[RMDB]
RNA sequence: GGGAACGACUCGAGUAGAGUCGAAAACUGGAAAGAUGAUAGAUGACUAUCUAACUCGUAAAAAAACCUAUAAUGAUCAUAUAGUUAAUCUAUUAUUUUGUGCAAAUAGAUGGGAGUUUGCAUCUUUUAUACAAGAACAACUAGAACAGGGAAUUACAAUCGUGUUAAGGUUCGCCUUAACACGAUUAAAAGAAACAACAACAACAAC
Reactivity to 2A3 in 0.01 (KOAc 150mM, MgCl2 10mM, bicine 150mM(pH8.5), 24C), signal-to-noise 2, nucleotides 027 to 156: c040u060g020g010a080a050a010g040a030u030g000a010u000a020g000a000u010g000a020c000u000a000u000c020u030a080a070c040u030c070g080u100a000a000a040a090a050a120a160c090c040u130a150u040a200a160u090g030a020u150c030a010u040a000u030a240g000u030u010a250a040u020c000u000a010u030u030a020u020u100u030u070g010u020g000c000a000a000a040u030a030g040a020u030g000g000g060a060g030u020u030u040g010c000a020u060c020u050u120u020u040a090u000a030c030a000a010g030a130a010c030a020a000c070u030a020g020a040a010c010a060g000g060g040a030a030u110u080a060c070
Reactivity to DMS in 0.01 (KOAc 150mM, MgCl2 10mM, bicine 150mM(pH8.5), 24C), signal-to-noise 1, nucleotides 027 to 156: c070u000g050g010a080a060a050g060a030u010g000a040u000a060g030a050u000g000a160c040u000a020u000c060u000a120a100c090u000c050g000u030a000a000a100a150a060a080a190c050c020u000a140u010a140a050u010g000a100u000c020a070u010a090u030a040g000u000u000a130a040u000c000u000a050u000u000a090u000u010u000u000g010u010g000c000a050a010a060u000a010g000a060u000g000g000g060a300g010u000u000u000g000c010a090u000c050u000u030u000u000a060u000a020c050a050a060g000a060a150c020a010a180c060u000a070g020a030a030c050a010g020g030g010a060a100u020u000a060c140
Description:
Source: RMDB library OK3TST, as collected in RNAgym. An RNA of 207 nucleotides, treated with 2A3 and DMS and read out base by base. The DMS profile rests on 1,557 reads.